[RMDB]
RNA sequence: GGGAACGACUCGAGUAGAGUCGAAAACAGGCAAAAAGCGCGCUGGAAAAACCAGCUGCGCACGACAGCCAAACAAGCCGUGAAAGGCUGUCAAUGAAAUGAAAACACGGCAAAACAACAAACAAAACGUGACUCUACGAUUCGUCGUAGAGUCACGAAAAGAAACAACAACAACAAC
Reactivity to 2A3 in 0.01 (KOAc 150mM, MgCl2 10mM, bicine 150mM(pH8.5), 24C), signal-to-noise 1, nucleotides 027 to 126: c000a000g230g000c030a070a030a000a100a090g050c000g000c040g080c010u020g000g000a080a010a000a000a140c000c020a000g000c070u130g000c000g000c000a000c000g000a000c000a000g020c000c050a000a120a000c030a140a000g020c020c020g000u020g070a180a000a000g000g000c000u000g000u000c040a000a100u140g170a040a000a020u130g040a000a010a010a010c000a000c020g080g030c000a000a150a000a030c110a020a000c060a100a150a030c060a000a130a000a000
The data come from the RNA Mapping Database (RMDB), library OK1LIB. This 177-nucleotide RNA was probed chemically with 2A3. The reactions ran in a buffer of 150 mM KOAc, 10 mM MgCl2 and 150 mM bicine (pH 8.5), at 24 C. Reactivities are given for positions 27 through 126.